Chemical mapping of a 207-nucleotide RNA with 2A3. The reactions ran in a buffer of 150 mM KOAc, 10 mM MgCl2 and 150 mM bicine (pH 8.5), at 24 C. It was measured as part of the RMDB library OK3TST. For 2A3 the reverse transcriptase was SuperScript II with manganese.
[RMDB]
RNA sequence: GGGAACGACUCGAGUAGAGUCGAAAAGGCCUGGGAGCUCAGAGGAUUGUGGGCUUUCUGGCAGGUGAGGGCCUGAAGGAAGAGACGCAUCUGUGGGCAUGCCUUCUCUCUUCCUCCCCUUGAUUUGGAAGGGAGCUGCCGCAGUGUCCUGAAGCAAUCUGCAAUACGUUUUCGAACGUAUUGCAGAAAAAGAAACAACAACAACAAC
Reactivity to 2A3 in 0.01 (KOAc 150mM, MgCl2 10mM, bicine 150mM(pH8.5), 24C), signal-to-noise 1, nucleotides 027 to 156: g020g030c020c020u000g000g030g020a000g010c000u010c040a050g060a110g090g090a190u150u130g040u090g000g050g020c030u070u040u000c050u020g110g010c000a020g000g050u130g060a050g050g060g030c000c050u060g050a060a020g040g000a000a010g030a000g010a010c050g030c050a060u040c040u150g060u190g050g020g040c040a000u060g000c000c000u140u060c000u040c000u010c000u000u000c010c000u030c030c030c000c000u090u150g090a160u140u050u140g000g010a000a000g020g000g010a020g000c050u040g050c040c000g000c010a010g040u010g030u130c000c000u030g060a040a030g040c030a010a060